[RMDB]
RNA sequence: GGGAACGACUCGAGUAGAGUCGAAAACCAAGUUGCGUAGUGGACCGCCUGGGGCUUAUGCGAAAGCUGGGUCUCACGGUCCAUAAUGUGGCAGGCACAGCGUGAGGCUGGCUUCACAGAGCAGCGAGCUUUUAUACAUCUUCGGAUGUAUAAAAGCAAAAGAAACAACAACAACAAC
Reactivity to 2A3 in 0.01 (KOAc 150mM, MgCl2 10mM, bicine 150mM(pH8.5), 24C), signal-to-noise 3, nucleotides 027 to 126: c000c000a000a020g020u020u020g010c020g040u100a050g030u060g000g010a010c000c010g150c110c090u010g010g000g000g030c020u050u030a090u300g030c010g050a080a030a010g000c010u020g010g020g010u010c000u000c010a010c010g000g000u000c000c000a000u010a000a010u010g010u010g010g010c100a090g120g000c060a060c010a300g030c020g080u180g200a060g300g000c010u010g000g000c000u040u030c010a020c010a010g020a000g030c010a000g000c000g010a000
Reactivity to DMS in 0.01 (KOAc 150mM, MgCl2 10mM, bicine 150mM(pH8.5), 24C), signal-to-noise 3, nucleotides 027 to 126: c020c020a120a120g000u000u000g030c000g030u000a150g050u000g010g000a020c010c000g020c130c220u000g000g010g000g000c010u000u000a030u030g030c010g010a110a080a120g010c000u000g000g010g010u000c000u000c000a060c000g000g000u000c000c010a010u000a020a030u000g030u000g010g000c300a050g000g000c010a100c020a020g010c010g010u010g000a120g020g010c000u000g000g000c010u000u000c000a020c020a030g000a110g020c010a040g030c030g000a120

An RNA of 177 nucleotides, treated with 2A3 and DMS and read out base by base. The DMS profile rests on 3,171 reads. For DMS the reverse transcriptase was MarathonRT. Values cover nucleotides 27 to 126. For 2A3 the reverse transcriptase was SuperScript II with manganese.